[RMDB]
RNA sequence: GGGAACGACUCGAGUAGAGUCGAAAAGUUAGGAAAACACGUGGCUCUUAACAGGCAGGAUUUAAUGAGAUUUAAAUGUGUUGACUUUGGUAGUUACUUUCUACCGGUGAGAUUGAACAAUAAUAACCGGCUAUAUGUAGUUCGCUACAUAUAGCCGAAAAGAAACAACAACAACAAC
Reactivity to 2A3 in 0.01 (KOAc 150mM, MgCl2 10mM, bicine 150mM(pH8.5), 24C), signal-to-noise 2, nucleotides 027 to 126: g030u050u050a010g000g070a050a010a030a000c020a020c040g000u040g070g000c000u010c000u090u020a070a020c020a060g100g030c030a000g000g120a070u000u000u100a120a130u180g030a040g030a130u070u100u160a080a240a040u040g030u000g000u050u020g010a020c020u070u130u100g040g000u000a030g030u040u080a100c030u140u150u020c000u010a010c000c010g000g020u100g010a100g000a040u110u140g070a060a010c010a040a030u150a130a030u190a120a000c040
Reactivity to DMS in 0.01 (KOAc 150mM, MgCl2 10mM, bicine 150mM(pH8.5), 24C), signal-to-noise 3, nucleotides 027 to 126: g020u010u000a070g010g000a070a120a070a040c050a040c040g030u010g000g000c050u000c000u000u010a050a070c180a100g010g030c070a040g000g000a110u000u000u010a020a030u000g000a060g010a100u010u000u000a030a060a030u000g020u000g010u000u000g000a110c030u000u000u000g000g000u010a020g010u000u010a040c140u000u010u000c010u000a060c020c010g010g010u020g020a090g010a100u000u010g000a060a100c080a050a040u010a090a060u000a090a110c240

The record gives the reactivity of an RNA of 177 nucleotides to 2A3 and DMS. For DMS the reverse transcriptase was MarathonRT. Values cover nucleotides 27 to 126.